Structure probing data (DMS and 2A3) for a 170-nucleotide construct. It was measured as part of the RMDB library 15KLIB. High 2A3 reactivity points to a flexible backbone, as in loops and unpaired stretches. Reactivities are given for positions 27 through 129.
[RMDB]
RNA sequence: GGGAACGACUCGAGUAGAGUCGAAAAGGCUCUCCCUUAGCCAUCCGAGUAGGACGUCUGUCCUCCUACGGAUGCCCAGGUCGGACCGCGGGGAGGUGGAGAUGCCAUGCCGACCCGAAGAGGAAAGUAGGCCAUAAGUUCGCUUAUGGCAAAAGAAACAACAACAACAAC
Reactivity to DMS in 0.01 (KOAc 150mM, MgCl2 10mM, bicine 150mM(pH8.5), 24C), signal-to-noise 9, nucleotides 027 to 129: g000g000c030u020c030u010c030c020c040u030u050a090g010c190c010a020u000c000c000g020a040g020u010a020g020g000a020c000g050u080c260u100g000u010c020c000u000c040c000u020a140c010g020g010a000u010g000c060c030c020a110g010g020u040c070g010g010a150c010c050g030c080g000g000g010g030a080g000g000u000g000g010a070g000a050u020g040c020c030a040u050g030c040c010g000a110c020c020c040g000a070a070g020a050g000g040a030a040a040g010u050a090g010
Reactivity to 2A3 in 0.01 (KOAc 150mM, MgCl2 10mM, bicine 150mM(pH8.5), 24C), signal-to-noise 9, nucleotides 027 to 129: g020g000c010u010c010u030c010c010c010u070u110a020g030c030c010a000u000c000c000g000a010g000u010a000g010g010a000c010g190u150c280u300g010u000c010c000u020c000c000u130a180c010g000g000a000u010g000c000c010c000a040g020g020u040c030g020g040a050c010c020g020c050g020g010g000g010a030g010g020u070g010g020a110g010a040u170g030c020c020a040u100g020c000c010g030a050c000c000c010g030a060a040g040a020g050g070a060a050a020g110u140a080g100